[RMDB]
RNA sequence: GGGAACGACUCGAGUAGAGUCGAAAAGCAUCCUGUUCUAGGUUGGUUUCUUAGCGAUUAUGGAGGGGUUGGACCCUCCUGGUGUGAGAAGGAAACACAUCAAAACAAAAAACAGGGUUCUGUAACCGACCAGCAGUAUCUUCGGAUACUGCUGGUCAAAAGAAACAACAACAACAAC
Reactivity to 2A3 in 0.01 (KOAc 150mM, MgCl2 10mM, bicine 150mM(pH8.5), 24C), signal-to-noise 1, nucleotides 027 to 126: g030c050a030u030c000c000u000g000u000u030c060u080a070g110g000u000u030g030g080u000u020u000c030u100u040a000g040c070g090a190u080u120a070u270g000g000a030g030g020g000g010u030u300g290g040a300c000c000c000u000c000c000u000g000g000u000g000u020g020a030g030a020a090g080g120a000a000a020c020a000c000a040u020c000a020a280a090a080c090a000a110a000a000a000a000c000a000g010g000g010u030u000c080u100g110u060a100a130c030c060
Reactivity to DMS in 0.01 (KOAc 150mM, MgCl2 10mM, bicine 150mM(pH8.5), 24C), signal-to-noise 1, nucleotides 027 to 126: g000c130a030u000c000c040u000g000u010u020c010u030a050g000g000u020u000g070g000u000u000u000c000u000u000a130g010c090g020a060u040u050a030u000g010g000a000g050g000g010g000u110u030g060g000a270c000c000c000u000c000c000u000g000g050u000g080u000g000a010g000a050a110g040g030a010a000a010c000a010c000a060u010c020a020a050a010a270c300a070a000a070a030a050a010c000a000g000g000g050u000u000c030u000g000u090a190a080c240c060